[RMDB]
RNA sequence: GGGAACGACUCGAGUAGAGUCGAAAAAGCACUGGUACGAUACGUCGUACCAGUGCAGUCGUUGGGAUGGAACGCAAUUAAAUACAUGUGUGACGUGUAUUUGCGAACGACGUAAUUAUUUUUCAAACUCCCACUGCAUCUUCGGAUGCAGUGGGAGAAAAGAAACAACAACAACAAC
Reactivity to 2A3 in 0.01 (KOAc 150mM, MgCl2 10mM, bicine 150mM(pH8.5), 24C), signal-to-noise 1, nucleotides 027 to 126: a000g000c000a000c000u000g000g000u000a000c000g030a040u020a000c260g200u000c000g000u000a000c000c000a000g000u000g000c000a000g000u000c000g060u000u050g110g140g120a190u190g060g080a170a000c000g000c080a000a260u200u060a120a030a000u070a000c000a000u000g180u190g270u300g200a010c000g020u020g000u030a060u000u000u000g000c040g000a000a000c030g000a000c040g020u090a000a010u070u300a280u080u150u000u000u010c020a010a020a000